The record gives the reactivity of an RNA of 177 nucleotides to DMS and 2A3.
The reactions ran in a buffer of 150 mM KOAc, 10 mM MgCl2 and 150 mM bicine (pH 8.5), at 24 C.
For 2A3, 4,247 sequencing reads were counted.
Reactivities are rounded to 0.1 and cut off at 0 and 3.
RNA sequence: GGGAACGACUCGAGUAGAGUCGAAAAAAGAUAUGGAGUCAUUUGUCAGCGUUACUGGGUAGCCACUCUAUGUCGGAAACGACAUAGAUGCUACGUAACGCUUGGAUUUAAUGACUCCUAAGUCAAAUCACCACUAUAACUUCGGUUAUAGUGGUGAAAAAGAAACAACAACAACAAC
Reactivity to DMS in 0.01 (KOAc 150mM, MgCl2 10mM, bicine 150mM(pH8.5), 24C), signal-to-noise 2, nucleotides 027 to 126: a110a070g010a050u000a300u010g010g010a020g010u000c000a020u000u000u000g010u010c000a040g010c000g010u010u000a000c010u020g030g020g030u000a010g000c030c110a080c110u010c010u000a010u000g000u000c000g010g000a140a100a230c000g020a010c000a010u000a010g020a000u000g000c000u000a000c030g010u000a010a000c010g000c000u010u010g020g000a010u010u020u010a010a010u010g000a000c010u000c000c000u000a010a070g000u000c010a070a090a190
Reactivity to 2A3 in 0.01 (KOAc 150mM, MgCl2 10mM, bicine 150mM(pH8.5), 24C), signal-to-noise 2, nucleotides 027 to 126: a000a020g120a050u100a070u170g000g000a000g010u020c010a030u010u020u020g020u000c020a020g020c010g020u010u010a010c040u250g300g300g000u000a000g000c040c040a090c030u000c000u010a000u010g030u020c010g010g000a030a040a010c000g000a010c010a000u010a020g020a030u190g000c000u000a000c000g000u000a000a010c010g000c000u000u050g010g000a000u300u040u300a010a000u010g000a000c010u000c000c000u010a040a020g010u000c030a020a040a140